[RMDB]
The record gives the reactivity of an RNA of 177 nucleotides to DMS.
RNA sequence: GGGAACGACUCGAGUAGAGUCGAAAAGAAUUAAAGUUUUGGUACCUUCUAACUAGCAAGUACACCUGGCAAAAAUCCGUCUUAAGGACUACAGUAAAAAGAGCUCAUAGAAGAUAGCCCAGGUUUGAUGGAACUAUGGAUUCGUCCAUAGUUCCAUAAAAGAAACAACAACAACAAC
Reactivity to DMS in 0.01 (KOAc 150mM, MgCl2 10mM, bicine 150mM(pH8.5), 24C), signal-to-noise 2, nucleotides 027 to 126: g040a080a150u000u020a140a030a130g000u020u000u000u000g000g000u010a120c030c050u030u030c030u020a150a120c100u010a070g030c100a010a040g020u000a070c100a100c030c050u000g030g020c090a020a010a090a180a060u000c040c050g030u010c060u010u010a150a090g010g000a030c020u010a060c070a140g000u000a040a040a020a170a120g000a030g020c030u000c120a100u000a070g020a230a130g000a050u030a080g000c160c000c020a040g010g010u000u000u000g000

Source: RMDB library OK2TRN, as collected in RNAgym. Conditions: 150 mM KOAc, 10 mM MgCl2 and 150 mM bicine (pH 8.5), 24 C.